[RMDB]
RNA sequence: GGGAACGACUCGAGUAGAGUCGAAAAGCCAACGCGUGCAGCAGUCGCACCAGAAACCAAGAGCCUCUGUGCUUAUGCCAGGAGGAGGGCCUUGCCCGACUGAGAGUGCUCGCUGAAAGAGGCUGCGAUACUACACGCUAUUCGUAGCGUGUAGUAUAAAAGAAACAACAACAACAAC
Reactivity to DMS in 0.01 (KOAc 150mM, MgCl2 10mM, bicine 150mM(pH8.5), 24C), signal-to-noise 9, nucleotides 027 to 126: g010c020c020a120a120c210g010c170g020u000g000c010a130g000c000a010g010u000c010g010c020a030c030c040a170g000a100a100a110c180c150a090a100g010a020g000c000c000u000c000u000g000u060g010c010u020u030a100u020g010c010c020a030g000g000a040g010g000a260g000g000g000c010c170u010u040g010c000c010c010g000a170c010u000g000a100g010a060g010u050g000c010u000c010g010c170u010g000a060a070a070g000a210g000g000c010u000g010c010g010
Reactivity to 2A3 in 0.01 (KOAc 150mM, MgCl2 10mM, bicine 150mM(pH8.5), 24C), signal-to-noise 9, nucleotides 027 to 126: g070c010c000a040a040c090g040c060g030u020g000c020a030g000c000a000g030u020c000g000c010a020c020c020a040g140a100a060a030c060c020a090a030g010a010g020c010c010u040c010u050g090u150g100c030u220u210a110u300g010c010c000a020g020g050a030g020g030a050g010g020g000c040c120u170u300g010c010c000c000g030a040c020u050g050a010g010a010g120u250g020c010u010c020g020c040u080g060a060a070a040g120a030g000g000c000u010g000c000g000
The record gives the reactivity of an RNA of 177 nucleotides to DMS and 2A3.
It was measured as part of the RMDB libraries RFM100 and RFMREP.
For 2A3 the reverse transcriptase was SuperScript II with manganese.
Conditions: 150 mM KOAc, 10 mM MgCl2 and 150 mM bicine (pH 8.5), 24 C.
For DMS the reverse transcriptase was MarathonRT.